[RMDB]
RNA sequence: GGGAACGACUCGAGUAGAGUCGAAAACACCUCCGAUCGUCGCUGAGGCGUCGCCACCCCUCGCCCGGAGCUUCUCUCUGGAUACUACCCGGUGGAUACAACUGAAGCUUCAACCCCAGUACCGCUUUUCUUGAUCUCUACUGCUCUCCGGGCGAGGCAGUCUAGGGUAGUUCGCUACCCUAGACUGAAAAGAAACAACAACAACAAC
Reactivity to 2A3 in 0.01 (KOAc 150mM, MgCl2 10mM, bicine 150mM(pH8.5), 24C), signal-to-noise 1, nucleotides 027 to 156: c090a060c000c000u050c020c000g060a090u140c030g000u020c000g010c070u110g100a090g070g040c030g060u050c050g070c070c010a120c000c000c020c010u000c000g010c070c000c000g000g000a000g020c130u160u040c050u000c000u010c060u140g020g020a050u110a200c050u060a070c020c010c030g070g000u050g060g030a030u040a120c050a080a010c020u030g040a080a000g050c000u160u150c080a030a120c010c010c000c000a000g050u060a100c050c050g000c000u010u000u130u020c020u020u210g120a200u030c010u020c010u060a080c060u010g030c020u000c000u000c070c000g000g020g010c000g000a000g000g000